[RMDB]
RNA sequence: GGGAACGACUCGAGUAGAGUCGAAAACGGACAUUCGGUCCUUGCGCCAGGUCCUUUGACCAGAGUUUUUCCAUGUGGACGCUCUUUCAAUGGACGUGUCCCCGCGUGCUUCUUAGACGGACUGCGGUAAAAGAACACAGUUCGCUGUGUUCUUUUAAAAAGAAACAACAACAACAAC
Reactivity to 2A3 in 0.01 (KOAc 150mM, MgCl2 10mM, bicine 150mM(pH8.5), 24C), signal-to-noise 9, nucleotides 027 to 126: c040g010g020a010c020a090u150u160c170g080g010u050c040c000u050u140g060c090g020c020c010a030g000g060u010c000c000u000u010u050g040a050c060c070a010g010a010g010u040u060u040u090u050c090c050a190u300g170u300g110g000a020c020g010c010u000c000u010u060u030c050a060a070u070g010g010a010c040g050u030g030u040c000c010c010c000g020c020g040u050g040c030u040u030c010u070u150a090g040a080c050g020g010a020c020u050g020c020g020g010
Reactivity to DMS in 0.01 (KOAc 150mM, MgCl2 10mM, bicine 150mM(pH8.5), 24C), signal-to-noise 9, nucleotides 027 to 126: c140g000g000a030c040a110u020u020c130g010g010u010c010c060u010u020g010c110g010c060c030a100g000g010u000c010c020u010u000u000g000a060c140c130a050g010a050g000u000u010u030u010u000c010c010a190u030g020u030g000g010a040c300g000c010u000c000u000u030u020c070a030a040u010g000g010a030c050g010u000g000u000c000c010c010c040g000c050g010u010g000c080u010u000c030u000u020a130g010a120c130g000g000a040c030u010g020c040g000g000
Annotation
Structure probing data (2A3 and DMS) for a 177-nucleotide construct. 2A3 adducts were read by reverse transcription with SuperScript II with manganese. DMS adducts were read by reverse transcription with MarathonRT. The RNA was probed in 150 mM KOAc, 10 mM MgCl2 and 150 mM bicine (pH 8.5) at 24 C. DMS (dimethyl sulfate) methylates the pairing face of unpaired adenines and cytosines.